[RMDB]
RNA sequence: GGGAACGACUCGAGUAGAGUCGAAAAAGUCACCUAUUACGAUAGUUGACAUUUGAACCAGCGAACAAUUCAGUUGCGAGAUUCGAGGUUUCAGUCUGAAUCAUAGUAGCCAUUACGAUGGCUACAACUCACUCCCGACUGUUCGCAGUCGGGAGAACAUGUAAUGACCCUUCGGGGUCAUUACAUGAAAAGAAACAACAACAACAAC
Reactivity to DMS in 0.01 (KOAc 150mM, MgCl2 10mM, bicine 150mM(pH8.5), 24C), signal-to-noise 1, nucleotides 027 to 156: a100g010u030c010a060c020c000u010a040u000u010a150c200g050a080u000a000g010u010u000g040a040c030a140u000u000u000g020a110a150c010c010a070g060c060g040a040a060c060a090a110u000u010c070a090g020u000u010g010c020g000a040g000a060u000u000c020g010a220g010g000u000u000u000c100a100g010u000c020u000g000a060a000u010c150a120u000a210g020u000a010g010c010c000a040u000u010a160c270g020a180u020g010g070c000u010a000c000a040a060c180u000c000a030c010u000c000c010c010g020a050c000u000g030u000u010c250g040c030a000g000u000c020g030g000g040a010g000a000a060
Reactivity to 2A3 in 0.01 (KOAc 150mM, MgCl2 10mM, bicine 150mM(pH8.5), 24C), signal-to-noise 2, nucleotides 027 to 156: a000g000u010c010a020c000c000u000a010u010u080a090c230g050a000u000a000g000u000u000g010a020c040a080u150u100u150g030a030a020c000c000a040g150c020g000a010a010c030a050a120u030u000c000a000g010u010u000g010c000g020a000g000a000u000u000c000g010a020g040g030u070u100u300c060a030g110u030c000u000g000a000a000u060c040a030u070a070g000u000a000g030c010c010a000u040u040a100c210g180a020u030g000g000c000u010a000c000a000a000c000u110c050a050c020u000c020c000c000g000a000c000u030g050u060u080c290g010c070a000g000u000c000g000g010g000a000g000a000a000
This 207-nucleotide RNA was probed chemically with DMS and 2A3. Conditions: 150 mM KOAc, 10 mM MgCl2 and 150 mM bicine (pH 8.5), 24 C. For 2A3, 1,079 sequencing reads were counted.